[RMDB]
Chemical mapping of a 177-nucleotide RNA with DMS. For DMS, 3,856 sequencing reads were counted. Source: RMDB library TTRINS, as collected in RNAgym. DMS adducts were read by reverse transcription with MarathonRT. The reactions ran in a buffer of 150 mM KOAc, 10 mM MgCl2 and 150 mM bicine (pH 8.5), at 24 C. In probing experiments dimethyl sulfate is read out at A N1 and C N3, which are open when not base-paired.

RNA sequence: GGGAACGACUCGAGUAGAGUCGAAAAGAUAUGGAUCCACUAUGUCCAUAUGAUACAGGGAGAGCACUGUCGGAAACGACAGGGCUCAUCGAUCUGUAUCAUAUGGACAUAGUAAGGAUCCUAAGUCCAAUCGAGAAUACUUCGGUAUUCUCGAUUGAAAAGAAACAACAACAACAAC
Reactivity to DMS in 0.01 (KOAc 150mM, MgCl2 10mM, bicine 150mM(pH8.5), 24C), signal-to-noise 3, nucleotides 027 to 126: g010a100u000a300u010g000g000a020u000c000c000a200c000u000a010u000g010u010c000c010a010u000a010u010g020a010u000a000c000a010g000g000g000a030g000a020g000c020a020c010u000g000u000c000g020g010a140a110a300c000g000a020c000a000g000g000g030c000u000c000a090u010c230g000a070u030c010u000g000u000a000u000c000a000u000a000u000g000g000a000c000a000u000a000g020u010a030a110g020g000a000u000c000c010u000a010a120g000u010c030
Source information: Reactivities are given for positions 27 through 126.